[RMDB]
RNA sequence: GGGAACGACUCGAGUAGAGUCGAAAAGAUAUGGACAGAUACACAGAGGUACACCUCUAACCGUCGUACUAUCGGAAACGAUAGUACGACGGUUAUGUGUACUACCCACCUGUGUCUGUCCUAAGUCGCAUUAAGUCUUGUUCGCAAGACUUAAUGCAAAAGAAACAACAACAACAAC
Reactivity to DMS in 0.01 (KOAc 150mM, MgCl2 10mM, bicine 150mM(pH8.5), 24C), signal-to-noise 2, nucleotides 027 to 126: g020a110u010a300u010g010g000a000c010a000g010a060u010a110c010a040c080a040g000a170g000g000u010a000c020a000c000c000u000c000u000a000a010c000c000g020u000c000g020u010a000c000u000a030u000c000g010g000a150a120a240c020g000a000u000a000g000u010a010c000g010a000c000g000g000u020u000a000u000g000u010g000u000a000c010u000a030c070c080c200a300c120c040u000g010u000g000u000c000u000g000u000c000c000u030a040a030g000u000c090